[RMDB]
This 207-nucleotide RNA was probed chemically with DMS and 2A3. The reactions ran in a buffer of 150 mM KOAc, 10 mM MgCl2 and 150 mM bicine (pH 8.5), at 24 C. As a SHAPE reagent, 2A3 marks flexible, mostly unpaired nucleotides at the ribose 2'-OH. DMS adducts were read by reverse transcription with MarathonRT. Reactivities are given for positions 27 through 156. Values are in units of 0.01, from 0 to 300, in steps of 10. 2A3 adducts were read by reverse transcription with SuperScript II with manganese. It was measured as part of the RMDB library OK3TST. For DMS, 3,508 sequencing reads were counted.

RNA sequence: GGGAACGACUCGAGUAGAGUCGAAAAUGCUAAAUUCAUUCACAUUAAUAGGACCAGAUAAUUCAAAAUAUGUUCCAUCUUUAUUGAUUGAUGUAGGAAAUAAAUAUAUAACUAUGGAUACUGUAAAUCCUAAUUUAGAUGUAACAGGUAAUAUUGCCGAUAUCAUUGCAUUCGUGCAAUGAUAUCGAAAAGAAACAACAACAACAAC
Reactivity to DMS in 0.01 (KOAc 150mM, MgCl2 10mM, bicine 150mM(pH8.5), 24C), signal-to-noise 2, nucleotides 027 to 156: u000g010c030u000a050a070a070u010u010c080a100u000u000c080a050c060a070u010u000a060a150u010a070g000g000a080c060c040a070g000a100u000a040a080u020u000c090a060a090a130a180u000a030u010g000u000u000c050c010a160u000c020u000u000u000a070u020u000g010a100u000u000g010a090u010g010u000a080g000g020a080a070a120u000a060a020a110u000a160u000a070u000a050a180c010u000a170u000g010g000a120u010a050c060u010g010u000a090a080a110u020c010c030u000a040a040u000u000u000a050g010a040u010g020u000a070a030c060a040g010g010u010a020a130u000a140u000u000g000c130
Reactivity to 2A3 in 0.01 (KOAc 150mM, MgCl2 10mM, bicine 150mM(pH8.5), 24C), signal-to-noise 5, nucleotides 027 to 156: u070g010c020u080a120a110a090u140u110c050a050u120u110c050a070c030a090u180u170a140a080u080a090g030g010a030c040c040a010g070a150u120a140a050u220u120c080a080a080a090a120u160a060u060g020u030u010c030c010a000u000c020u020u160u090a140u070u120g060a050u030u050g020a050u080g030u060a030g010g040a060a090a090u070a030a080a010u140a010u080a040u050a200a020c010u020a050u100g000g030a020u010a090c010u030g020u050a000a120a020u000c000c000u010a030a050u040u040u060a020g000a010u010g000u020a030a000c020a040g020g020u090a100a060u130a120u190u110g030c020